[RMDB]
RNA sequence: GGGAACGACUCGAGUAGAGUCGAAAAUGUUAGGAAACACAUUAAAAUACACCCAUAAUCAAGCAACUCAAUCCUUAAAUUUUUCUCCUACUGAGUAUCUGGAAAACAGGUGCAGAAAUGGAUCAUUCCCAUGAAAAGAGUUCGCUCUUUUCAUGGGAAAAGAAACAACAACAACAAC
Reactivity to 2A3 in 0.01 (KOAc 150mM, MgCl2 10mM, bicine 150mM(pH8.5), 24C), signal-to-noise 3, nucleotides 027 to 126: u020g010u000u090a090g220g090a040a170a000c020a010c000a040u140u110a020a120a100a070u140a020c050a140c010c020c000a050u140a040a090u090c080a090a000g060c000a000a130c020u060c180a030a100u060c020c030u060u110a100a080a200u070u100u040u090u030c030u010c000c010u020a090c050u060g020a010g040u010a040u050c030u000g010g030a060a010a020a050c000a000g020g000u000g010c020a040g170a030a070a050u170g030g000a000u000c000a020u030u000

Source: RMDB library RFM100, as collected in RNAgym.
An RNA of 177 nucleotides, treated with 2A3 and read out base by base.